[RMDB]
RNA sequence: GGGAACGACUCGAGUAGAGUCGAAAAAUGCCGACCCGAAGAAGGAAAGGAGGACACGGACGACAAACCGUAGGUACUCUUGCCCUUUAUUGUUGGGUGCACCCUGGGACCCAGUAAUACCCGGGGGAAACCGGGAAGUUCGCUUCCCGGAAAAGAAACAACAACAACAAC
Reactivity to DMS in 0.01 (KOAc 150mM, MgCl2 10mM, bicine 150mM(pH8.5), 24C), signal-to-noise 9, nucleotides 027 to 129: a080u040g010c050c030g020a090c020c030c020g030a060a030g000a030a020g000g000a050a260a050g010g000a060g000g000a130c100a000c020g000g050a110c040g020a120c300a070a120a100c040c000g020u020a010g020g030u040a080c030u000c000u010u000g020c300c000c010u000u000u000a090u060u040g000u020u010g000g010g000u000g010c050a110c000c000c030u050g000g060g030a050c030c000c030a160g020u030a040a060u060a110c040c010c000g000g020g000g000g020a010a070a100
Reactivity to 2A3 in 0.01 (KOAc 150mM, MgCl2 10mM, bicine 150mM(pH8.5), 24C), signal-to-noise 6, nucleotides 027 to 129: a000u110g040c020c030g070a050c010c000c010g030a040a020g010a010a010g020g020a050a020a000g010g010a000g000g020a010c010a010c010g030g070a060c060g040a040c140a050a120a020c010c000g020u030a130g010g060u220a050c010u010c000u020u030g020c000c000c010u050u060u050a210u070u130g150u050u080g000g000g000u010g000c010a070c000c000c000u010g000g020g010a060c010c010c040a030g070u060a010a030u130a230c000c000c000g000g000g000g000g000a050a000a010
This 170-nucleotide RNA was probed chemically with DMS and 2A3. DMS adducts were read by reverse transcription with MarathonRT. The reactions ran in a buffer of 150 mM KOAc, 10 mM MgCl2 and 150 mM bicine (pH 8.5), at 24 C.